RNA sequence: GGGAACGACUCGAGUAGAGUCGAAAAGGGGUCAAAUGCUCCGUUGAGUGAGACAUGCGUCACUGAAGCCUCCACGGUGACGCAACAGCUCACAUGGACGGUGAGGCAUUUGACGGAGGCACCCAAACGGGUUGCCCAGUUCGCUGGGCAACCCGAACUCUUGAAUUUAGUUCGCUAAAUUCAAGAGAAAAGAAACAACAACAACAAC
Reactivity to 2A3 in 0.01 (KOAc 150mM, MgCl2 10mM, bicine 150mM(pH8.5), 24C), signal-to-noise 2, nucleotides 027 to 156: g030g030g080g010u000c000a000a010a000u000g010c000u000c090c020g000u030u100g060a050g000u010g010a000g020a070c050a140u040g000c000g000u000c000a010c010u020g010a110a010g030c000c000u030c010c000a030c050g010g010u020g000a000c010g000c000a020a030c050a020g070c000u020c000a010c030a050u200g150g030a010c010g030g040u220g110a070g080g000c010a000u000u010u010g000a000c010g000g000a000g000g010c010a040c010c010c020a050a080a020c020g000g000g050u010u010g000c000c050c030a030g000u050u100c230g000c110u000g000g000g000c030a010a000c000c010c000g000a020a020

The record gives the reactivity of an RNA of 207 nucleotides to 2A3.
The RNA was probed in 150 mM KOAc, 10 mM MgCl2 and 150 mM bicine (pH 8.5) at 24 C.
Values cover nucleotides 27 to 156.